[RMDB]
Conditions: 150 mM KOAc, 10 mM MgCl2 and 150 mM bicine (pH 8.5), 24 C. This 177-nucleotide RNA was probed chemically with DMS and 2A3.
RNA sequence: GGGAACGACUCGAGUAGAGUCGAAAAGCGCCCCGGACGCCUCCACCAGCCCGUCGCGGGCAGCCUGAGCUUCGAAAGAAUUAGCCGCCGUACGCAAUUCCGACAGACCGGUCUGCGCGACCAGCACCCAGUUAUGAUAGUUCGCUAUCAUAACUGGAAAAGAAACAACAACAACAAC
Reactivity to DMS in 0.01 (KOAc 150mM, MgCl2 10mM, bicine 150mM(pH8.5), 24C), signal-to-noise 4, nucleotides 027 to 126: g030c110g020c030c060c010c050g010g010a090c080g010c030c010u000c040c050a060c070c060a120g020c020c020c070g010u000c100g030c070g020g000g010c020a060g000c030c020u000g000a100g030c070u000u000c040g000a090a110a140g000a050a090u010u000a140g010c010c020g020c040c070g000u010a050c080g000c040a070a130u000u000c030c020g010a120c110a090g010a080c060c020g010g010u000c020u010g010c050g020c050g000a080c040c050a090g010c110a120c150
Reactivity to 2A3 in 0.01 (KOAc 150mM, MgCl2 10mM, bicine 150mM(pH8.5), 24C), signal-to-noise 2, nucleotides 027 to 126: g040c020g060c010c020c010c020g040g020a040c050g020c010c000u020c020c000a040c020c000a000g040c000c000c020g070u090c060g040c090g050g040g000c010a000g020c000c010u030g010a010g050c020u030u040c050g100a130a090a050g050a050a120u050u060a070g000c020c020g040c010c020g030u030a030c030g010c020a030a070u080u050c020c010g020a030c040a040g080a060c020c030g000g010u020c010u040g060c050g010c000g020a030c000c020a020g020c000a030c010
For 2A3 the reverse transcriptase was SuperScript II with manganese. It was measured as part of the RMDB library OK2TST.